[RMDB]
RNA sequence: GGGAACGACUCGAGUAGAGUCGAAAACCUUGUUUCUAAACCAGUCUCAUAGAUAUGAAGGCUUUGUUUCUGAUGAAGGAUUGUGGGAUUGUUGCUUAACACUGAUGAGCAUAUUAUUGGUUCAAUUCAAUUUUUGAGGAUUCGUCCUCAAAAAUUGAAAAGAAACAACAACAACAAC
Reactivity to 2A3 in 0.01 (KOAc 150mM, MgCl2 10mM, bicine 150mM(pH8.5), 24C), signal-to-noise 2, nucleotides 027 to 126: c000c000u000u060g030u010u040u020c060u070a010a000a110c000c000a010g000u010c040u000c000a020u000a110g090a090u160a020u210g100a090a020g000g010c030u050u060u120g050u020u130u000c030u020g050a050u050g020a060a040g080g030a080u000u050g000u100g030g050g030a060u070u000g040u070u080g000c000u020u040a050a000c010a020c140u100g020a150u030g010a030g020c010a030u020a050u150u130a110u050u050g020g000u010u000c000a020a030u050u050

The record gives the reactivity of an RNA of 177 nucleotides to 2A3. For 2A3, 650 sequencing reads were counted. Values cover nucleotides 27 to 126. Conditions: 150 mM KOAc, 10 mM MgCl2 and 150 mM bicine (pH 8.5), 24 C. Source: RMDB library RFM100, as collected in RNAgym.